The record gives the reactivity of an RNA of 177 nucleotides to DMS and 2A3. For 2A3 the reverse transcriptase was SuperScript II with manganese. Conditions: 150 mM KOAc, 10 mM MgCl2 and 150 mM bicine (pH 8.5), 24 C.

RNA sequence: GGGAACGACUCGAGUAGAGUCGAAAAGCUAGGCAUUUCGAUGCCUAGCGAGCGGAGAGUCUAUGCAUCUCUGAAUCACACAACAGCCGUGUCUAUGCGUGGGAGUAUCCCUCUUCGGAGGGAUAAAGCGAACAACUCGAUUCGUCGAGUUGUUCGCAAAAGAAACAACAACAACAAC
Reactivity to DMS in 0.01 (KOAc 150mM, MgCl2 10mM, bicine 150mM(pH8.5), 24C), signal-to-noise 1, nucleotides 027 to 126: g000c000u000a000g000g040c010a000u000u000u000c210g010a020u000g000c000c020u000a000g010c000g000a020g050c020g000g000a040g000a040g020u010c100u000a070u020g020c060a120u000c010u000c030u020g000a090a090u000c060a050c050a080c060a050a060c110a080g020c050c070g040u000g010u000c090u000a030u010g030c100g030u000g000g000g010a150g000u000a000u000c000c000c000u000c000u000u000c190g030g030a020g000g000g010a000u000a000a050a110
Reactivity to 2A3 in 0.01 (KOAc 150mM, MgCl2 10mM, bicine 150mM(pH8.5), 24C), signal-to-noise 1, nucleotides 027 to 126: g000c000u000a000g010g030c000a000u060u050u140c190g090a010u010g000c000c000u000a000g010c000g000a040g010c020g000g000a000g000a000g030u070c050u100a140u180g040c010a090u000c010u000c010u060g070a030a130u070c050a000c000a020c030a070a220c000a110g130c050c060g050u040g050u090c080u160a080u070g000c030g000u020g030g040g010a080g030u030a010u000c000c010c000u000c050u010u030c230g090g010a030g020g000g000a000u000a000a000a000